[RMDB]
RNA sequence: GGGAACGACUCGAGUAGAGUCGAAAACUCGGUUAAUUCGUUAACCGAGACUUCUUAAACAUCUUUUCAACACAUAGAUGGUAAAUAUUCAAAGAUGUACGAAUGCGAUAAACUUCGGUUUAUCGAAUCAUCUAUAAUCGUUCGCGAUUAUAGAUGAAAAAGAAACAACAACAACAAC
Reactivity to 2A3 in 0.01 (KOAc 150mM, MgCl2 10mM, bicine 150mM(pH8.5), 24C), signal-to-noise 9, nucleotides 027 to 126: c000u000c000g000g000u020u010a020a010u080u080c110g020u040u010a010a000c000c000g000a000g000a000c010u060u030c000u030u150a180a170a010c000a010u000c000u020u050u090u110c100a100a050c030a020c030a180u170a140g100a170u060g010g030u060a060a110a060u190a090u090u110c040a020a020a020g040a040u040g030u060a030c080g110a160a060u160g070c000g000a000u010a010a010a010c000u030u040c170g080g000u010u000u010a010u000c000g000a010a040
Reactivity to DMS in 0.01 (KOAc 150mM, MgCl2 10mM, bicine 150mM(pH8.5), 24C), signal-to-noise 7, nucleotides 027 to 126: c010u000c000g010g000u000u000a000a030u000u020c190g020u000u000a010a010c000c000g000a010g010a030c080u010u000c010u000u000a080a110a070c010a010u000c000u000u000u000u010c120a080a070c120a080c120a120u010a070g010a090u010g010g000u000a040a080a090u010a070u000u010c130a040a040a050g010a040u000g000u000a100c210g000a070a080u010g000c010g000a010u000a000a010a010c000u000u010c190g030g010u000u000u000a000u000c000g000a060a090